About this RNA
The record gives the reactivity of an RNA of 177 nucleotides to 2A3 and DMS. In probing experiments dimethyl sulfate is read out at A N1 and C N3, which are open when not base-paired. 2A3 is a SHAPE reagent: it acylates the 2'-hydroxyl of flexible nucleotides of all four kinds. The data come from the RNA Mapping Database (RMDB), library M2PK50.
[RMDB]
RNA sequence: GGGAACGACUCGAGUAGAGUCGAAAAUUGUCAUGUUUCGACAUGACAAACAUAAGAUCAAGACAAAAACGGCCAAAAAGUCUAGAUCAAAUAAAGGCCGAAGACUAGGUUAGUUCGCUAACCUAAACUCAAUAUCGCAAUUCGUUGCGAUAUUGAGAAAAGAAACAACAACAACAAC
Reactivity to 2A3 in 0.01 (KOAc 150mM, MgCl2 10mM, bicine 150mM(pH8.5), 24C), signal-to-noise 2, nucleotides 027 to 126: u020u010g010u020c000a000u010g020u000u110u080c190g080a010c000a010u000g000a010c000a020a030a000c040a050u170a010a070g040a050u050c080a020a010g000a010c000a010a180a010a050a070c020g000g000c000c000a050a040a080a020a000g010u000c020u030a070g040a140u060c030a000a090a000u120a020a050a020g000g000c000c010g030a060a010g120a070c080u030a000g010g000u010u010a020g000u020u060c240g010c130u000a000a030c000c000u010a020a020a010
Reactivity to DMS in 0.01 (KOAc 150mM, MgCl2 10mM, bicine 150mM(pH8.5), 24C), signal-to-noise 2, nucleotides 027 to 126: u000u010g000u000c000a000u000g010u000u010u010c210g010a050c000a000u010g000a000c010a010a030a090c100a030u000a050a120g000a140u020c060a110a020g010a040c010a030a020a040a100a110c030g010g010c000c010a050a020a080a090a040g010u000c000u000a110g000a120u030c050a040a040a080u000a060a130a210g000g000c000c000g000a110a110g020a140c220u000a000g000g000u000u000a000g000u000u000c140g000c010u000a020a020c030c000u000a010a110a180